[RMDB]
An RNA of 177 nucleotides, treated with DMS and 2A3 and read out base by base. 2A3 is a SHAPE reagent: it acylates the 2'-hydroxyl of flexible nucleotides of all four kinds. 2A3 adducts were read by reverse transcription with SuperScript II with manganese. For DMS the reverse transcriptase was MarathonRT. The RNA was probed in 150 mM KOAc, 10 mM MgCl2 and 150 mM bicine (pH 8.5) at 24 C. For 2A3, 911 sequencing reads were counted.
RNA sequence: GGGAACGACUCGAGUAGAGUCGAAAAGAAACAUGAGGGCAGAUCAUGGAAAUAAGUACACACUGCCGGAAAAGUGUACGAAAAACGCGAACACUCGAAGUGUAAAGAGUGGACACUGCGGAAGAAAGGGAUUUCUUAUGUUCGCAUAAGAAAUCCCAAAAGAAACAACAACAACAAC
Reactivity to DMS in 0.01 (KOAc 150mM, MgCl2 10mM, bicine 150mM(pH8.5), 24C), signal-to-noise 2, nucleotides 027 to 126: g000a160a130a110c030a040u000g000a090g000g000g000c000a030g000a290u000c030a000u000g000g030a120a110a030u000a000a160g000u010a030c020a000c000a150c000u000g010c020c000g000g000a030a160a070a100g000u000g020u020a000c050g010a010a020a030a080a080c010g000c010g000a040a030c030a000c030u010c000g010a030a030g000u080g000u040a080a150a160g000a000g010u000g000g010a090c200a040c040u140g020c000g030g000a120a100g010a040a050a060
Reactivity to 2A3 in 0.01 (KOAc 150mM, MgCl2 10mM, bicine 150mM(pH8.5), 24C), signal-to-noise 1, nucleotides 027 to 126: g030a040a050a010c000a060u040g030a040g090g000g000c000a000g000a000u030c000a000u000g000g000a020a020a030u190a000a030g000u000a000c000a000c000a000c020u000g030c140c000g200g050a090a020a000a000g000u000g000u040a000c000g000a250a000a000a000a000c050g000c000g000a000a000c000a000c000u000c000g030a090a000g300u140g010u290a000a050a230g000a000g000u000g060g080a000c000a000c190u220g000c010g000g040a000a000g030a040a150a000